[RMDB]
RNA sequence: GGGAACGACUCGAGUAGAGUCGAAAAUACCGUCUUCUCCCCGACGGUUCCAAUCCAUAGCUUCACGUUGUGUAGCGUAGGUGGAAGGUAUCGUGUGGUGUAUAAACACCACAUAGUCUCUUAGGGGUCAAGCUGAUAAACUUCGGUUUAUCAGCAACCGUUACUCACGAUUCGUCGUGAGUAACGGAAAAGAAACAACAACAACAAC
Reactivity to 2A3 in 0.01 (KOAc 150mM, MgCl2 10mM, bicine 150mM(pH8.5), 24C), signal-to-noise 3, nucleotides 027 to 156: u130a020c010c000g010u030c020u150u020c030u090c000c000c000c000g000a010c010g000g040u000u040c020c010a030a090u020c010c000a030u030a090g010c000u050u060c020a050c080g300u290u250g000u050g000u040a010g000c000g080u090a080g100g040u020g000g040a070a020g060g040u120a050u150c050g000u010g020u000g030g000u010g070u010a120u060a230a280a010c000a000c000c010a000c000a000u010a010g010u000c000u000c030u140u220a020g000g010g010g020u050c080a050a040g000c000u000g000a000u000a000a000a000c010u050u030c100g060g000u010u000u000a000u000c000a000g000c000a000a000
Reactivity to DMS in 0.01 (KOAc 150mM, MgCl2 10mM, bicine 150mM(pH8.5), 24C), signal-to-noise 1, nucleotides 027 to 156: u000a110c030c010g040u000c010u010u010c060u000c010c000c010c080g010a050c040g020g000u000u000c040c030a100a100u000c040c050a110u000a230g020c010u010u000c000a020c070g000u000u000g050u000g100u010a070g060c010g010u010a040g050g000u000g000g000a050a130g010g010u000a060u000c130g090u000g000u010g030g000u000g040u000a070u010a150a170a140c000a010c000c000a030c010a000u000a010g030u000c010u000c050u000u000a140g050g010g040g020u010c050a040a190g020c020u000g000a000u000a000a000a000c000u010u020c300g050g010u000u000u000a030u000c000a000g030c000a000a030

The data come from the RNA Mapping Database (RMDB), library M2RFPK. An RNA of 207 nucleotides, treated with 2A3 and DMS and read out base by base. For 2A3 the reverse transcriptase was SuperScript II with manganese. The reactions ran in a buffer of 150 mM KOAc, 10 mM MgCl2 and 150 mM bicine (pH 8.5), at 24 C. For DMS, 2,300 sequencing reads were counted. For DMS the reverse transcriptase was MarathonRT.